[RMDB]
RNA sequence: GGGAACGACUCGAGUAGAGUCGAAAAGCGUACUACGGACGUUGAUCUGAUAUUGUCAGAAUAUGCAUGGGCUAUUCCCAAAUAGGAAUAGCUCUGUGAUGUAUUCUUGGAUUUAUAUCAGGGAGUCCGUAUCGCAAAACCGUCGAUUCGUCGACGGCGAGUUAGAAACCUUCGGGUUUCUAACUCGAAAAGAAACAACAACAACAAC
Reactivity to DMS in 0.01 (KOAc 150mM, MgCl2 10mM, bicine 150mM(pH8.5), 24C), signal-to-noise 1, nucleotides 027 to 156: g010c030g010u010a060c120u000a010c000g040g020a000c010g020u000u000g010a010u010c020u010g000a000u000a000u010u000g010u030c000a080g000a050a020u000a000u000g000c010a070u000g000g020g030c000u000a020u000u000c010c000c020a030a150a280u000a060g020g020a030a030u000a010g020c000u000c000u010g050u000g020a130u010g010u000a010u000u000c010u020u010g010g000a060u000u000u000a030u010a030u000c020a030g020g000g000a030g010u000c000c010g010u000a000u000c000g000c000a110a040a160a040c000c000g060u000c010g030a080u010u000c210g040u000c010g030a020c000g000g000
Reactivity to 2A3 in 0.01 (KOAc 150mM, MgCl2 10mM, bicine 150mM(pH8.5), 24C), signal-to-noise 3, nucleotides 027 to 156: g010c010g040u090a080c070u000a000c020g000g010a000c010g180u290u010g000a030u000c000u000g000a000u000a000u000u020g000u000c000a000g000a010a000u010a010u010g030c010a010u010g010g030g010c000u010a000u000u020c040c000c040a080a270a110u280a060g000g010a000a000u000a000g010c040u020c010u070g020u010g020a290u040g010u000a000u000u010c020u050u110g160g010a040u150u300u080a010u040a000u000c000a000g000g000g020a000g010u000c000c000g000u000a000u020c000g000c000a090a040a000a050c000c000g000u000c000g010a030u070u050c180g030u020c010g140a010c000g050g000
Notes
This 207-nucleotide RNA was probed chemically with DMS and 2A3. For 2A3 the reverse transcriptase was SuperScript II with manganese. The RNA was probed in 150 mM KOAc, 10 mM MgCl2 and 150 mM bicine (pH 8.5) at 24 C.